Source information: The record gives the reactivity of an RNA of 177 nucleotides to DMS and 2A3. The 2A3 profile rests on 2,407 reads. It was measured as part of the RMDB library OK1LIB.
RNA sequence: GGGAACGACUCGAGUAGAGUCGAAAAUACGGUCUCCUAUGCGUACAGGAGUUACCCCCUUCGGAUCUUCCAGCCAUUUGUUGUGUGGAGGGGUGCCGCUAAUCUCUAGGGGUAAGCCAAGUGCGUCAUAAUACUGCAGCUUCGGCUGCAGUAUUAUAAAAGAAACAACAACAACAAC
Reactivity to DMS in 0.01 (KOAc 150mM, MgCl2 10mM, bicine 150mM(pH8.5), 24C), signal-to-noise 3, nucleotides 027 to 126: u030a080c140g000g020u000c000u020c000c040u000a090u050g000c010g030u010a000c040a080g000g000a080g010u010u000a070c040c010c010c010c150u020u030c150g000g000a050u040c070u010u010c010c000a060g000c030c030a090u000u010u010g000u020u010g020u000g010u000g000g000a080g010g010g010g000u030g000c000c010g020c160u020a110a080u010c050u000c110u020a090g000g020g020g040u000a020a010g010c030c080a070a140g000u000g010c030g000u000c190
Reactivity to 2A3 in 0.01 (KOAc 150mM, MgCl2 10mM, bicine 150mM(pH8.5), 24C), signal-to-noise 4, nucleotides 027 to 126: u300a040c050g050g030u020c010u030c030c010u060a060u200g010c000g030u020a020c000a030g030g000a050g040u020u080a040c020c000c000c000c000u020u140c050g050g010a070u050c010u090u060c040c010a050g020c040c020a160u100u070u160g120u060u070g030u030g020u010g030g020a020g000g020g010g030u050g100c000c000g010c070u100a080a110u150c030u010c020u120a010g010g020g020g000u020a050a040g000c000c010a150a070g010u010g000c010g000u020c010
2A3 adducts were read by reverse transcription with SuperScript II with manganese.